[RMDB]
RNA sequence: GGGAACGACUCGAGUAGAGUCGAAAAUUUGUGAAGACGUCAUUGUACGUUGUCAUUUGUACAAAAAUGAAUAUAAGGAGAUAUAAGAAUGGAAAAUAUUUUAGAAGUCAACCAAAUAAAAAAAUACUCAUUAAUAGGUGUUCGCACCUAUUAAUGAAAAAGAAACAACAACAACAAC
Reactivity to 2A3 in 0.01 (KOAc 150mM, MgCl2 10mM, bicine 150mM(pH8.5), 24C), signal-to-noise 2, nucleotides 027 to 126: u010u020u120g010u030g030a180a090g030a010c010g010u010c020a140u020u300g090u160a010c060g000u000u010g050u000c020a020u060u040u130g040u060a030c090a060a120a120a020a030u000g040a040a000u090a020u040a200a030g150g010a030g040a090u080a000u050a120a060g030a060a110u070g070g090a110a120a150a020u120a080u100u140u070u030a130g040a250a040g050u020c020a000a010c010c050a000a090a000u210a060a110a040a000a000a000a000u040a080c000
Reactivity to DMS in 0.01 (KOAc 150mM, MgCl2 10mM, bicine 150mM(pH8.5), 24C), signal-to-noise 1, nucleotides 027 to 126: u000u000u000g000u020g010a080a190g000a030c010g000u000c020a130u030u020g020u000a010c010g000u000u000g000u000c160a090u000u000u020g010u030a080c040a010a030a020a160a050u030g000a030a040u020a170u010a090a080g000g020a170g010a070u010a080u000a100a200g010a130a050u050g020g020a060a180a120a080u030a000u010u000u000u010a130g000a090a070g000u010c020a030a270c100c020a030a020a040u030a010a000a040a080a030a030a130u000a060c110
Chemical mapping of a 177-nucleotide RNA with 2A3 and DMS. The reactions ran in a buffer of 150 mM KOAc, 10 mM MgCl2 and 150 mM bicine (pH 8.5), at 24 C. DMS adducts were read by reverse transcription with MarathonRT.